Source: RMDB library TTRDES, as collected in RNAgym. Structure probing data (DMS) for a 177-nucleotide construct. Conditions: 150 mM KOAc, 10 mM MgCl2 and 150 mM bicine (pH 8.5), 24 C.
[RMDB]
RNA sequence: GGGAACGACUCGAGUAGAGUCGAAAAUAUUGAUAUGGACGUAGAGCGAAAUCCCUGACCGAAGCCCUUCUCGGAAACGAGAAGGGUGGAGGUCAGUGAGAUUUCCCUACGUCCUAAGUCUUGGUAAGUGAAAUAGUAGCUUCGGCUACUAUUUCACAAAAGAAACAACAACAACAAC
Reactivity to DMS in 0.01 (KOAc 150mM, MgCl2 10mM, bicine 150mM(pH8.5), 24C), signal-to-noise 2, nucleotides 027 to 126: u010a130u010u000g010a030u010a300u000g000g000a020c000g010u000a000g010a220g070c180g020a000a040a010u000c000c010c010u000g000a010c000c010g010a300a300g010c000c000c000u000u020c000u000c010g000g000a050a130a160c000g000a010g000a000a010g000g000g000u000g010g000a300g000g000u000c000a000g000u010g030a160g000a000u000u000u000c000c010c010u000a000c000g000u000c000c000u000a010a120g000u000c000u000u000g000g020u000a090a130